This 177-nucleotide RNA was probed chemically with 2A3 and DMS.
RNA sequence: GGGAACGACUCGAGUAGAGUCGAAAAGGCGUCUUCGCUGCCUCGGCCGCCGUGCACUGACCGGUAGCCGCCGUAAUGGCGGCAUUGUUCCCAUAAAAGGAUGUGGGUGUGGGUGACGAAGUAGCAGAUAGUGAUUACUAUUCGUAGUAAUCACUAUAAAAGAAACAACAACAACAAC
Reactivity to 2A3 in 0.01 (KOAc 150mM, MgCl2 10mM, bicine 150mM(pH8.5), 24C), signal-to-noise 8, nucleotides 027 to 126: g080g030c060g090u030c060u120u080c070g010c020u020g000c000c000u010c010g030g000c080c010g000c010c010g090u060g020c010a030c080u090g110a070c000c020g020g010u040a040g010c010c000g000c010c000g050u110a130a120u230g000g000c000g000g000c000a000u000u080g000u020u010c000c000c000a010u140a010a140a010a010g100g020a090u140g040u140g180g000g000u040g010u040g020g010g000u020g010a010c020g010a030a010g000u040a010g020c020a000g010
Reactivity to DMS in 0.01 (KOAc 150mM, MgCl2 10mM, bicine 150mM(pH8.5), 24C), signal-to-noise 9, nucleotides 027 to 126: g010g010c090g010u010c040u000u000c090g020c020u000g010c030c020u000c030g010g010c080c020g020c020c020g030u010g010c040a050c050u000g000a100c040c040g000g010u000a130g020c000c010g020c010c000g010u010a130a100u020g010g020c000g010g010c000a020u010u010g000u000u000c010c000c000a130u010a060a070a110a120g010g010a110u000g020u010g010g000g020u000g020u000g010g010g020u000g010a090c040g000a040a050g020u000a050g020c040a160g000
The 2A3 profile rests on 24,906 reads. It was measured as part of the RMDB library OK2TRN. Values cover nucleotides 27 to 126.